[RMDB]
RNA sequence: GGGAACGACUCGAGUAGAGUCGAAAAGCCAGUUUGGUGCAGGCUAUAGCUGCCAUCGGCUGACCUAGAGAAGACACAUCAGCUGAUCCUUUGGACCCAGAGACUUGAGACAGAAGUUCUGGGCUUCUCCUCCUGCGGCCUAGCUCUGAGACAAUGAGCUAUUAAUCGGAUUCGUCCGAUUAAUAGCAAAAGAAACAACAACAACAAC
Reactivity to 2A3 in 0.01 (KOAc 150mM, MgCl2 10mM, bicine 150mM(pH8.5), 24C), signal-to-noise 4, nucleotides 027 to 156: g040c010c020a030g020u040u080u090g080g010u080g030c030a020g010g060c040u100a060u150a270g000c040u060g000c010c030a030u020c000g010g000c000u000g020a030c020c060u070a080g020a020g020a240a040g070a050c080a000c000a110u030c010a010g000c010u010g010a070u170c010c040u060u060u100g050g010a050c010c000c010a010g010a020g030a050c040u020u060g030a070g040a130c080a130g170a090a000g020u010u000c000u010g000g030g000c000u030u030c000u010c000c010u030c000c010u020g010c010g070g010c010c010u010a050g020c000u010c040u090g030a070g000a030c030a060a190u130g020a040
Reactivity to DMS in 0.01 (KOAc 150mM, MgCl2 10mM, bicine 150mM(pH8.5), 24C), signal-to-noise 2, nucleotides 027 to 156: g050c030c010a100g020u010u000u000g050g020u020g020c030a060g020g000c040u000a080u000a090g000c040u010g040c050c100a060u010c040g010g030c010u000g000a020c030c030u000a130g020a150g000a110a120g020a190c070a130c090a140u000c020a040g030c010u000g000a070u010c060c070u010u000u010g020g000a080c000c000c020a060g000a160g030a050c030u010u020g010a220g000a300c130a160g020a080a060g020u000u000c010u010g010g000g010c030u010u000c040u000c050c020u010c060c040u000g020c040g030g000c010c020u000a000g000c040u000c030u020g020a120g010a100c070a060a040u000g000a250
Chemical mapping of a 207-nucleotide RNA with 2A3 and DMS. The 2A3 profile rests on 2,428 reads. It was measured as part of the RMDB library OK3TST. For DMS the reverse transcriptase was MarathonRT.